This 207-nucleotide RNA was probed chemically with DMS and 2A3. For DMS the reverse transcriptase was MarathonRT. For DMS, 4,913 sequencing reads were counted. For 2A3, 2,406 sequencing reads were counted. Conditions: 150 mM KOAc, 10 mM MgCl2 and 150 mM bicine (pH 8.5), 24 C.
RNA sequence: GGGAACGACUCGAGUAGAGUCGAAAAAUUGAUGUCAGAGUGCCGCUGAAGUGCGAGUGAUACUUGUUUUACCGGCUCAUACAUAUGCUUAUGACCGAUUCUGUCGAUAAAGAUCUCUAUCAACGGACAAUGGCUCUUAUCGAGCCUGGAGAUAUCGUAUGCAUCAUUGGUUCGCCAAUGAUGCAUAAAAAGAAACAACAACAACAAC
Reactivity to DMS in 0.01 (KOAc 150mM, MgCl2 10mM, bicine 150mM(pH8.5), 24C), signal-to-noise 3, nucleotides 027 to 156: a140u000u010g000a060u010g020u000c020a150g020a160g020u000g040c010c030g030c040u020g010a070a090g030u000g000c060g020a100g020u010g010a120u010a060c060u000u000g060u000u000u000u000a050c030c000g010g010c070u000c030a060u010a040c050a090u000a130u010g020c090u000u000a040u030g000a060c050c030g010a130u010u020c090u000g060u030c030g020a070u000a020a050a120g010a120u000c020u000c020u000a110u000c050a060a080c040g020g000a080c040a080a100u010g010g010c000u000c010u000u010a200u010c220g000a000g000c000c000u000g000g000a110g030a060u000a070u010c030g030
Reactivity to 2A3 in 0.01 (KOAc 150mM, MgCl2 10mM, bicine 150mM(pH8.5), 24C), signal-to-noise 5, nucleotides 027 to 156: a000u110u110g020a020u030g010u010c030a000g040a030g140u080g020c030c060g000c040u030g040a150a050g070u060g110c050g030a020g030u030g040a010u040a140c040u070u070g090u070u110u040u080a040c030c010g010g000c040u040c030a000u020a070c020a030u200a070u240g060c070u090u040a010u070g030a040c020c010g030a060u060u040c040u090g070u060c030g010a010u040a080a040a080g090a090u030c030u000c000u040a080u110c050a070a080c050g030g030a020c030a100a100u110g000g000c000u000c030u100u200a240u170c150g000a000g000c010c000u010g010g020a070g010a010u040a020u050c030g000